RNA sequence: GGGAACGACUCGAGUAGAGUCGAAAACUGGGUGGGCUAUGAUCCUAUGUGUAGGGCUGGCUAAGUCCUUGUUCCACUCCUUCUUGCAGUGGAUCUUGCCGCUUCUCUGAAUAUGAUUGAAAUGCCCACAGCACUUGCAGAGCAAGCAGAAAAGACAGGCCGUCCUGAGGUUCGCCUCAGGACGGCCAAAAGAAACAACAACAACAAC
Reactivity to 2A3 in 0.01 (KOAc 150mM, MgCl2 10mM, bicine 150mM(pH8.5), 24C), signal-to-noise 1, nucleotides 027 to 156: c030u000g000g000g000u000g000g000g030c020u000a030u020g030a050u050c020c020u030a000u090g120u000g210u300a000g030g000g000c060u080g070g050c010u050a030a030g080u090c090c000u090u150g010u010u060c020c000a000c000u040c000c030u280u200c080u110u300g090c040a020g000u030g010g010a080u020c000u000u070g000c000c050g020c100u300u160c000u080c000u010g030a090a000u000a020u090g010a020u000u050g060a020a020a010u010g000c000c010c010a000c000a000g000c000a000c000u000u040g000c010a040g030a020g200c030a070a030g010c030a020g270a240a110a130a000g150a150c130a070